RNA sequence: GGGAACGACUCGAGUAGAGUCGAAAAGAUAUGGAUCCACCCAGCGAAGUAUAGCGCCAUGUCGGAAACGACAUGGACGCUGCGAAGCUGGUGGAUCCUAAGUCAAAGACCUGGUUCGCCAGGUCAACAUAAUUUGGACCUUCGGGUCCAAAUUAUGAAAAGAAACAACAACAACAAC
Reactivity to DMS in 0.01 (KOAc 150mM, MgCl2 10mM, bicine 150mM(pH8.5), 24C), signal-to-noise 3, nucleotides 027 to 126: g000a010u010a090u030g000g000a000u000c000c000a010c230c110c120a020g030c000g020a300a220g030u020a070u000a010g030c010g000c020c010a010u000g010u000c010g000g000a030a020a070c000g010a030c000a010u000g000g000a040c000g020c020u000g010c130g020a050a130g020c000u000g010g030u010g000g000a000u000c000c010u000a010a090g010u000c000a140a140a160g010a010c000c000u000g000g000u000u010c300g030c010c010a020g010g000u000c010a030a160
Reactivity to 2A3 in 0.01 (KOAc 150mM, MgCl2 10mM, bicine 150mM(pH8.5), 24C), signal-to-noise 2, nucleotides 027 to 126: g020a010u000a000u030g000g010a000u000c000c010a050c150c220c060a000g000c000g050a130a020g110u170a300u300a300g020c010g010c000c000a000u000g000u000c000g000g000a010a010a030c010g000a000c010a000u020g000g030a080c020g030c040u010g030c060g000a010a010g000c020u000g000g010u000g000g000a000u000c000c000u010a000a000g000u010c020a150a110a110g010a020c000c010u010g020g040u050u130c180g060c090c000a000g110g000u000c000a010a000
This 177-nucleotide RNA was probed chemically with DMS and 2A3.
DMS adducts were read by reverse transcription with MarathonRT.
2A3 adducts were read by reverse transcription with SuperScript II with manganese.
Reactivities are given for positions 27 through 126.